[RMDB]
RNA sequence: GGGAACGACUCGAGUAGAGUCGAAAAUAAACUGGUAGGAUUUUCCAUCUCUGAAGUUAAUAUUAUCAGCUGACCUGCUGAUCAUCUUAUCAACCAGGGUGCUGCACUCAGAGUAGAGAAAGUAAAAUAGCCACUUGUUGCCCCUGGCAGGACAUCAUGUAUACUGAUUUUUCGAAAUCAGUAUACAAAAAGAAACAACAACAACAAC
Reactivity to DMS in 0.01 (KOAc 150mM, MgCl2 10mM, bicine 150mM(pH8.5), 24C), signal-to-noise 2, nucleotides 027 to 156: u000a010a090a050c050u010g040g040u000a110g010g000a140u000u010u000u000c000c010a240u010c020u030c050u000g000a110a130g030u000u000a080a100u000a150u000u000a110u000c040a030g020c010u010g020a110c050c020u000g040c020u000g000a030u000c140a130u000c180u010u000a100u000c010a030a100c090c050a070g020g010g000u010g040c010u000g020c190a150c070u000c010a030g010a080g020u000a070g030a160g000a090a040a120g000u000a070a060a090a150u000a240g010c020c010a050c110u000u000g020u000u000g000c040c010c050c030u010g020g000c050a070g010g020a110c040a080u000c060a160
Reactivity to 2A3 in 0.01 (KOAc 150mM, MgCl2 10mM, bicine 150mM(pH8.5), 24C), signal-to-noise 2, nucleotides 027 to 156: u060a000a030a050c050u030g010g020u060a080g010g140a050u030u010u050u030c020c010a130u010c040u000c010u030g080a120a040g010u020u080a110a050u090a130u150u100a060u070c010a000g000c000u030g130a140c050c040u040g000c010u000g020a010u020c000a080u000c040u070u180a040u060c000a000a060c020c010a010g000g020g000u040g030c020u040g000c030a040c020u020c010a000g000a030g080u120a050g130a020g040a040a070a000g050u130a020a120a140a140u080a050g030c020c010a050c080u070u110g030u080u060g040c030c020c000c040u030g030g000c000a020g050g020a030c010a030u100c030a100
Chemical mapping of a 207-nucleotide RNA with DMS and 2A3. Source: RMDB library OK3TST, as collected in RNAgym. 2A3 adducts were read by reverse transcription with SuperScript II with manganese.